[RMDB]
An RNA of 177 nucleotides, treated with 2A3 and DMS and read out base by base.
DMS (dimethyl sulfate) methylates the pairing face of unpaired adenines and cytosines.
DMS adducts were read by reverse transcription with MarathonRT.
RNA sequence: GGGAACGACUCGAGUAGAGUCGAAAAUCUUAUGCCACUUCUUAGCAUCCAAAAUUUGUCCCGCUGAGUCAACACCCGCCCCGCUGCCGAGGAUAAAGGUGUCCGCUAACGAAGACACUUUAUGUGAGACUACAGUAUGAUUCGUCAUACUGUAGUCAAAAGAAACAACAACAACAAC
Reactivity to 2A3 in 0.01 (KOAc 150mM, MgCl2 10mM, bicine 150mM(pH8.5), 24C), signal-to-noise 9, nucleotides 027 to 126: u020c010u030u070a090u140g030c020c010a030c020u040u020c020u050u070a040g020c020a060u070c040c050a050a080a170a260u080u110u130g070u050c010c000c010g000c060u050g030a020g050u040c030a010a040c010a040c030c010c010g020c000c010c000c000g030c020u030g010c010c010g040a050g030g020a040u100a070a080a010g060g020u020g020u010c000c010g020c090u090a090a060c060g070a080a020g020a010c000a010c000u050u070u040a170u160g140u040g060a090
Reactivity to DMS in 0.01 (KOAc 150mM, MgCl2 10mM, bicine 150mM(pH8.5), 24C), signal-to-noise 9, nucleotides 027 to 126: u020c030u000u020a050u010g000c030c030a060c060u010u010c030u010u010a090g010c050a060u020c040c070a040a060a090a100u010u030u020g010u000c020c020c020g020c080u010g000a080g010u010c070a080a090c130a080c060c010c010g010c030c010c010c030g020c030u010g010c030c020g000a090g000g010a060u020a020a050a050g000g020u000g000u000c010c110g010c130u020a080a120c250g000a180a100g000a040c020a010c010u010u000u010a050u030g020u010g000a220